[RMDB]
This 177-nucleotide RNA was probed chemically with 2A3 and DMS. The reactions ran in a buffer of 150 mM KOAc, 10 mM MgCl2 and 150 mM bicine (pH 8.5), at 24 C.
RNA sequence: GGGAACGACUCGAGUAGAGUCGAAAAACCCCGAGCUCCGGCCCGGGGAGGGGCCAUGGUGUUGCCUGCCCAACAUGUCAGCCGAAGUGCGGCUGAGGCAGCUCCAGCAGCUGGUGCUGGACCCAGGGACGUGGUAAAAGUUCGCUUUUACCACGUCAAAAGAAACAACAACAACAAC
Reactivity to 2A3 in 0.01 (KOAc 150mM, MgCl2 10mM, bicine 150mM(pH8.5), 24C), signal-to-noise 5, nucleotides 027 to 126: a010c010c000c000c000g030a030g020c010u040c060c140g080g010c030c010c010g000g020g030g030a080g010g010g010g010c040c010a140u160g020g010u060g030u060u090g050c010c010u010g030c010c030c010a030a060c110a180u220g050u090c010a010g000c040c000g100a250a040g200u280g220c010g010g000c000u010g000a020g020g010c010a010g010c010u020c010c000a040g000c020a030g030c080u180g080g070u120g050c010u000g030g030a030c010c010c000a070g030g050
Reactivity to DMS in 0.01 (KOAc 150mM, MgCl2 10mM, bicine 150mM(pH8.5), 24C), signal-to-noise 2, nucleotides 027 to 126: a070c000c000c000c020g000a110g010c010u040c180c130g030g040c010c020c070g000g010g020g000a070g000g000g000g000c020c060a080u010g000g000u000g000u020u030g000c120c020u000g000c000c000c040a040a130c090a080u010g000u000c000a080g020c000c010g000a290a190g030u030g020c040g000g000c000u000g010a030g000g010c020a010g010c090u000c090c000a070g000c030a050g010c060u000g010g020u010g010c020u000g020g000a080c070c040c010a170g010g000
Annotation: The DMS profile rests on 3,379 reads.